Structure probing data (DMS) for a 177-nucleotide construct.
It was measured as part of the RMDB library M2PK90.
The reactions ran in a buffer of 150 mM KOAc, 10 mM MgCl2 and 150 mM bicine (pH 8.5), at 24 C.
For DMS, 2,076 sequencing reads were counted.
[RMDB]
RNA sequence: GGGAACGACUCGAGUAGAGUCGAAAACACAACUGCGAAGGGGGGACGGAGAAGGCUAUGUUGGCCGGGCGACGGUUGUCCCGGUUUAAGCGUGAAGGCUGGUUUUCCAGGCAAAUCCGGAAUUGAAUUCGAUCUAAGGAUUCGUCCUUAGAUCGAAAAAAGAAACAACAACAACAAC
Reactivity to DMS in 0.01 (KOAc 150mM, MgCl2 10mM, bicine 150mM(pH8.5), 24C), signal-to-noise 2, nucleotides 027 to 126: c070a110c110a080a040c060u000g030c070g020a090a080g010g000g020g000g010g000a040c070g010g000a060g020a080a090g000g000c040u000a030u010g000u000u000g000g000c010c000g000g000g000c300g010a070c110g010g000u000u010g010u020c000c000c000g000g000u000u000u010a050a060g030c060g000u000g000a060a070g000g010c000u000g000g010u000u010u000u000c020c020a110g000g000c040a050a070a120u000c010c010g010g000a090a090u000u020g010a070a160